[RMDB]
RNA sequence: GGGAACGACUCGAGUAGAGUCGAAAAAUGUGAGCGCCUCCAGGGCGUGCUGGGCAGUGGGCGGCCAGGGCUGGCUGGUCGGUUUGACUGACCCAUGCUUUUGCACAGUGGUAGAGGCCUCGGGCAACCCUGAAGUAGGCCCGUGCAGCCUACAGGAUGACGUAAUUUAUUUCGAUAAAUUACGUCAAAAAGAAACAACAACAACAAC
Reactivity to 2A3 in 0.01 (KOAc 150mM, MgCl2 10mM, bicine 150mM(pH8.5), 24C), signal-to-noise 3, nucleotides 027 to 156: a000u110g070u040g010a030g000c140g000c020c000u020c060c010a060g110g070g010c010g000u000g010c000u020g000g000g000c000a020g060u040g000g000g040c000g010g000c020c000a000g020g070g050c050u070g040g010c000u010g010g000u010c020g110g030u070u070u120g090a010c010u040g140a200c000c000c000a020u110g020c030u070u130u130u130g010c010a010c000a090g060u080g070g050u090a040g010a010g070g000c000c000u000c000g010g040g000c040a060a060c010c000c020u040g040a110a020g020u050a000g000g020c010c040c050g020u090g010c040a010g000c000c000u010a000c000a030g100g030a050
Reactivity to DMS in 0.01 (KOAc 150mM, MgCl2 10mM, bicine 150mM(pH8.5), 24C), signal-to-noise 2, nucleotides 027 to 156: a130u000g010u010g000a070g000c130g010c020c000u000c020c090a150g010g010g010c030g010u010g010c000u000g010g000g030c000a040g020u000g020g020g000c000g010g000c010c010a060g020g030g000c050u000g010g030c070u000g010g030u000c010g030g020u000u000u000g020a060c020u000g010a060c000c000c030a020u010g010c000u000u000u000u020g040c000a100c040a220g020u000g030g030u000a030g020a090g050g040c000c010u000c010g020g010g000c030a090a150c020c000c030u000g010a090a150g010u000a030g010g020c010c000c070g010u010g020c090a160g000c000c000u000a030c010a080g000g010a200